[RMDB]
RNA sequence: GGGAACGACUCGAGUAGAGUCGAAAAAUUUUAGGGUCUACUACUGGAGGACUAGUCUUAAGACAGUGGGACAAAAGUUCUUGGGAUUUUCCCCCCUUAAUCAAUAUGCUCAUGUUGACUACCUAUGUGUAAGGCAGUCCAGAGAAGCAGAGAAGAAUAUUAGGGGUAUAUUCGUAUACCCCUAAUAAAAAGAAACAACAACAACAAC
Reactivity to DMS in 0.01 (KOAc 150mM, MgCl2 10mM, bicine 150mM(pH8.5), 24C), signal-to-noise 1, nucleotides 027 to 156: a080u010u000u000u000a050g030g020g000u000c050u000a020c060u030a110c020u030g020g020a110g010g000a020c020u000a080g020u000c040u000u010a110a140g020a080c090a070g040u010g010g020g000a200c050a050a110a130a100g040u010u010c020u000u000g000g020g020a200u020u000u000u000c020c010c010c000c030c000u000u000a030a040u010c050a030a100u000a110u000g000c050u000c020a050u020g020u000u000g000a020c020u000a070c000c020u000a170u000g030u000g000u010a140a050g020g000c020a030g050u000c010c020a120g000a080g000a060a030g020c040a040g020a150g000a110a070g000a110a140
Chemical mapping of a 207-nucleotide RNA with DMS. For DMS the reverse transcriptase was MarathonRT. Values cover nucleotides 27 to 156.